[RMDB]
RNA sequence: GGGAACGACUCGAGUAGAGUCGAAAACAGGAUCUUAGUUUUCACAAUUGGGAAAUUGGUCAGAAUCAGGAUUAAUGAAUGAUCCCCCCACCAUGUUUCUCAAUUGAAUGAUGGGAGAAUGGGGAGGCUCCCUGUUUACGUUCGCGUAAACAGGGAGAAAAGAAACAACAACAACAAC
Reactivity to DMS in 0.01 (KOAc 150mM, MgCl2 10mM, bicine 150mM(pH8.5), 24C), signal-to-noise 1, nucleotides 027 to 126: c020a100g010g030a140u010c070u010u000a100g000u000u020u000u000c130a250c040a000a010u010u000g010g010g000a030a010a010u000u000g000g010u000c280a080g000a130a070u010c060a010g020g030a210u020u000a120a180u000g000a160a100u000g000a020u000c010c010c010c040c010c120a070c030c000a010u000g000u000u020u010c000u000c020a000a030u010u000g000a070a090u000g010a020u020g040g010g010a090g010a040a080u000g020g020g000g000a080g030g000
Structure probing data (DMS) for a 177-nucleotide construct. DMS (dimethyl sulfate) methylates the pairing face of unpaired adenines and cytosines. The reactions ran in a buffer of 150 mM KOAc, 10 mM MgCl2 and 150 mM bicine (pH 8.5), at 24 C.